RNA sequence: GGGAACGACUCGAGUAGAGUCGAAAAGGAAUCGACAGUAGAGUGUAUCAUGUCAUUAAGCAUGCCGGGGAAUGGUGGUUUACCCCGUUAUCAAAUGAUUACCGACCAAUAAUUGGCGAAACUCGUUAGGCCCGUCCACACUUCGGUGUGGACGGAAGCCUUCACCAUGGUUCGCCAUGGUGAAGGCAAAAGAAACAACAACAACAAC
Reactivity to 2A3 in 0.01 (KOAc 150mM, MgCl2 10mM, bicine 150mM(pH8.5), 24C), signal-to-noise 2, nucleotides 027 to 156: g020g000a080a040u050c040g090a040c030a030g010u090a020g050a070g050u080g000u060a050u150c040a080u090g050u000c000a070u070u110a050a020g020c010a020u030g030c040c010g000g000g000g010a000a050u040g000g030u050g020g030u020u080u160a060c040c000c000c000g000u020u040a040u080c010a010a060a060u030g000a030u040u100a010c000c060g090a060c010c030a020a050u200a130a090u110u080g050g010c050g030a040a030a010c110u090c030g060u050u040a010g060g060c040c000c000g000u100c000c000a000c000a000c000u000u070c200g030g010u010g000u000g000g000a000c000g010g000a000a000